This 177-nucleotide RNA was probed chemically with 2A3 and DMS. It was measured as part of the RMDB library OK1LIB.
RNA sequence: GGGAACGACUCGAGUAGAGUCGAAAAGUGGGUUGGAUUGACGCCGACGGAUUGCGCCGCCAUCGCGAUGGUGCGACCUUGCCGGACGCCAUGACCGUGGUCGGGGCGGUGUUCCGGCCGAACGGCACGUGGGGCUGGUAUUCGUACCAGCCCCACGAAAAGAAACAACAACAACAAC
Reactivity to 2A3 in 0.01 (KOAc 150mM, MgCl2 10mM, bicine 150mM(pH8.5), 24C), signal-to-noise 2, nucleotides 027 to 126: g050u030g000g000g000u110u100g050g080a210u060u140g010a080c100g000c040c030g000a060c030g000g060a220u020u020g050c000g010c000c000g000c030c000a120u070c020g000c040g150a110u040g030g000u000g010c000g000a080c000c110u100u180g080c070c020g010g030a040c000g060c000c040a090u200g100a130c000c130g050u150g080g000u160c090g000g020g000g100c120g050g020u070g030u070u000c000c000g020g070c000c000g020a090a000c000g000g030c020a000
Reactivity to DMS in 0.01 (KOAc 150mM, MgCl2 10mM, bicine 150mM(pH8.5), 24C), signal-to-noise 1, nucleotides 027 to 126: g010u000g000g000g050u000u000g010g010a210u020u000g010a120c200g000c000c030g010a290c140g000g020a090u000u010g020c080g020c030c010g040c040c010a140u050c130g030c130g000a140u000g000g020u000g010c000g010a030c060c050u000u070g000c000c120g000g000a020c010g000c030c060a060u040g000a090c030c100g070u070g030g010u000c080g030g030g000g000c110g000g000u040g000u110u010c020c000g000g000c000c100g000a060a080c070g000g010c080a270

Description: The RNA was probed in 150 mM KOAc, 10 mM MgCl2 and 150 mM bicine (pH 8.5) at 24 C. For DMS, 1,601 sequencing reads were counted. DMS adducts were read by reverse transcription with MarathonRT. For 2A3 the reverse transcriptase was SuperScript II with manganese. Values cover nucleotides 27 to 126. In probing experiments dimethyl sulfate is read out at A N1 and C N3, which are open when not base-paired.